[RMDB]
Chemical mapping of a 177-nucleotide RNA with 2A3 and DMS. It was measured as part of the RMDB library OK2TST.
RNA sequence: GGGAACGACUCGAGUAGAGUCGAAAAUAUCGGUAGCUUUCUAGUAUUUAGCCUUGGAGAGUGGUCUCCCCAGCUUCAAACAAGGUUUCUCGUGCCUCGUCCUACUCAGGAACAUUUUAAAAAGAUACCGUAGUAUAAUCUUCGGAUUAUACUACGGAAAAGAAACAACAACAACAAC
Reactivity to 2A3 in 0.01 (KOAc 150mM, MgCl2 10mM, bicine 150mM(pH8.5), 24C), signal-to-noise 2, nucleotides 027 to 126: u090a000u060c060g040g050u020a040g020c010u040u140u080c030u060a040g030u000a170u050u110u040a050g000c010c020u000u030g040g020a050g000a010g110u050g000g090u010c020u020c030c000c000c000a040g030c000u070u090c060a090a150a100c010a030a050g000g000u000u060u040c030u000c010g070u090g060c010c000u020c000g020u030c010c000u050a130c010u020c090a030g000g050a040a020c000a030u150u180u060u060a120a180a070a010a000g090a050u070a040
Reactivity to DMS in 0.01 (KOAc 150mM, MgCl2 10mM, bicine 150mM(pH8.5), 24C), signal-to-noise 3, nucleotides 027 to 126: u000a030u000c040g000g030u000a090g010c040u000u000u000c030u000a100g000u010a080u000u000u010a120g020c030c030u010u000g010g010a090g000a100g010u000g020g010u000c070u010c040c000c030c040a200g000c040u000u000c100a070a060a200c080a080a060g010g010u000u010u000c020u000c040g000u010g000c060c010u000c060g010u000c020c010u000a060c090u010c050a050g010g000a070a070c110a090u000u020u010u010a050a080a040a130a080g000a110u010a070

The DMS profile rests on 1,952 reads. The reactions ran in a buffer of 150 mM KOAc, 10 mM MgCl2 and 150 mM bicine (pH 8.5), at 24 C.